[RMDB]
RNA sequence: GGGAACGACUCGAGUAGAGUCGAAAACAAUACUUCCAAUUGAAUAAGUAUGAAUAAAGGAUCCAUGGAUGAAGAUAGAAAGUUGAUUUCUAAUCGUAACUAAAUCUUCAAUUUCUUAUUUGUAAAGAAGAAAUUGAAGCAAAAUAGCUAUUAAACGCACUUAGUUAGACUUCGGUCUAACUAAGUGAAAAGAAACAACAACAACAAC
Reactivity to 2A3 in 0.01 (KOAc 150mM, MgCl2 10mM, bicine 150mM(pH8.5), 24C), signal-to-noise 3, nucleotides 027 to 156: c010a030a030u060a090c020u050u030c020c050a110a220u140u220g060a070a080u110a170a030g030u120a120u100g050a120a030u160a120a080a010g080g040a030u010c110c060a030u060g020g020a010u070g030a050a090g030a050u100a040g080a050a050a020g020u000u020g040a300u000u000u020c010u020a070a070u090c000g010u000a000a010c010u010a010a050a040u020c000u000u000c000a000a000u000u010u000c000u000u130a300u230u180u250g190u250a170a180a100g050a040a000g000a000a040a000u000u000g000a000a000g020c010a020a050a000a010u030a010g000c030u040a050u150u150a120a170a050c010g000
Reactivity to DMS in 0.01 (KOAc 150mM, MgCl2 10mM, bicine 150mM(pH8.5), 24C), signal-to-noise 1, nucleotides 027 to 156: c040a170a100u000a090c050u000u000c040c060a120a230u000u000g020a060a070u000a020a080g010u000a030u000g020a140a160u000a060a060a180g000g000a000u020c050c000a050u000g000g000a210u000g010a070a080g000a130u000a050g000a070a130a150g010u000u000g020a170u000u000u010c020u000a070a110u000c070g000u000a000a060c030u000a020a070a180u020c010u000u000c000a040a020u000u000u010c010u020u000a050u000u000u020g010u020a110a100a240g000a070a020g000a010a020a020u000u010g010a010a010g030c170a050a090a060a200u000a060g020c030u000a040u000u010a060a090a130c130g000

Chemical mapping of a 207-nucleotide RNA with 2A3 and DMS. The reactions ran in a buffer of 150 mM KOAc, 10 mM MgCl2 and 150 mM bicine (pH 8.5), at 24 C. It was measured as part of the RMDB library ARCHII.